Chemical mapping of a 177-nucleotide RNA with DMS and 2A3. It was measured as part of the RMDB libraries RFM100 and RFMREP. 2A3 adducts were read by reverse transcription with SuperScript II with manganese.
RNA sequence: GGGAACGACUCGAGUAGAGUCGAAAAGAGACAGGUCGGCUGCUAUCUAUUGGGGGUGUUUUGGUGCUUGACAGGAACGUUCGUAUAGUACGAGAGGAACUACGAACGGGUGCCACUGGUGUAUCGGUAUUCAAGUAAACUUCGGUUUACUUGAAUAAAAAGAAACAACAACAACAAC
Reactivity to DMS in 0.01 (KOAc 150mM, MgCl2 10mM, bicine 150mM(pH8.5), 24C), signal-to-noise 9, nucleotides 027 to 126: g010a100g000a070c080a060g000g020u010c050g010g010c030u000g000c040u010a050u010c060u010a110u020u020g010g000g010g010g010u000g000u010u010u010u010g010g020u010g000c050u010u000g010a080c100a090g000g020a110a130c020g010u000u000c000g000u000a010u000a060g010u000a130c000g000a230g010a210g000g000a090a100c160u000a010c000g000a010a010c000g010g000g010u010g010c030c020a100c090u000g000g010u000g020u010a040u000c040g000g010
Reactivity to 2A3 in 0.01 (KOAc 150mM, MgCl2 10mM, bicine 150mM(pH8.5), 24C), signal-to-noise 9, nucleotides 027 to 126: g070a000g010a010c020a040g010g080u090c020g040g010c010u040g020c010u050a070u090c020u050a130u160u140g030g000g010g010g010u030g040u020u060u050u080g040g000u050g010c030u070u070g060a050c030a050g050g040a090a010c000g000u000u000c000g000u000a000u000a020g010u010a000c000g020a020g010a040g110g010a010a010c000u000a000c000g000a000a000c000g010g000g020u050g020c010c010a030c030u030g040g020u050g020u030a060u090c030g030g000